[RMDB]
RNA sequence: GGGAACGACUCGAGUAGAGUCGAAAAAUAUGAGAAUUGAGGGAGUCCUUGUCAGGUUACUGCAGAAUUCAAUAGCUAGUUUUGCUAUAUUUAUUGUGACCAUAUAUGUGCAAGGCAUUGGGCUCAGUAUUGGGUAUUGAGGGGCUUCCGAUUUGGACGAUAUAGUAGCUUUCGAGCUACUAUAUCGAAAAGAAACAACAACAACAAC
Reactivity to 2A3 in 0.01 (KOAc 150mM, MgCl2 10mM, bicine 150mM(pH8.5), 24C), signal-to-noise 3, nucleotides 027 to 156: a020u220a090u130g040a030g070a130a100u180u140g020a090g000g010g000a030g030u070c010c000u040u040g040u060c130a070g000g050u040u010a010c040u050g020c050a040g060a120a160u120u140c080a060a060u030a030g000c060u040a080g120u120u100u210u090g000c010u030a020u000a080u080u150u040a160u120u200g040u040g060a030c030c030a030u050a010u030a010u300g070u070g070c020a010a020g010g000c000a000u010u070g010g000g010c000u000c030a020g010u050a110u070u160g090g010g000u100a090u060u160g040a060g000g040g000g030c010u020u030c010c000g040a000u030u040u100g010g030a000
Reactivity to DMS in 0.01 (KOAc 150mM, MgCl2 10mM, bicine 150mM(pH8.5), 24C), signal-to-noise 1, nucleotides 027 to 156: a090u000a090u010g010a190g010a090a060u010u020g000a170g020g000g000a030g060u000c000c000u000u000g010u000c050a130g020g000u000u000a040c040u000g000c050a060g010a060a060u000u000c040a100a110u000a100g000c040u000a120g030u010u020u000u000g020c000u000a070u010a070u000u020u000a070u020u010g010u000g000a060c010c030a130u000a090u000a050u000g050u010g020c040a080a090g030g020c020a090u000u000g010g030g010c050u010c000a030g020u010a030u020u000g010g040g020u000a130u000u000g010a080g050g000g020g030c040u010u000c000c010g000a180u010u010u000g010g010a300